[RMDB]
RNA sequence: GGGAACGACUCGAGUAGAGUCGAAAAGAUAUGGAUCACCUCCGUUCGAUCCUAAGCAAGGGUACAGGUUCGGAAACGAACCUUGACCUGAUGACCUUAGGAGUCGAACGGAGGUGAUCCUAAGUCACGCUAUAGAUAUGUUCGCAUAUCUAUAGCGAAAAGAAACAACAACAACAAC
Reactivity to DMS in 0.01 (KOAc 150mM, MgCl2 10mM, bicine 150mM(pH8.5), 24C), signal-to-noise 4, nucleotides 027 to 126: g020a060u000a300u000g010g000a010u000c000a010c010c000u010c000c000g020u000u000c000g000a140u000c000c010u000a010a020g020c030a090a130g000g010g010u000a140c060a040g000g000u000u000c000g000g000a120a090a290c010g010a010a000c000c000u000u000g020a040c010c010u000g000a110u020g000a090c300c010u000u000a000g000g010a060g010u000c010g010a020a020c020g010g000a000g000g000u000g000a000u000c000c000u000a000a050g010u000c040a300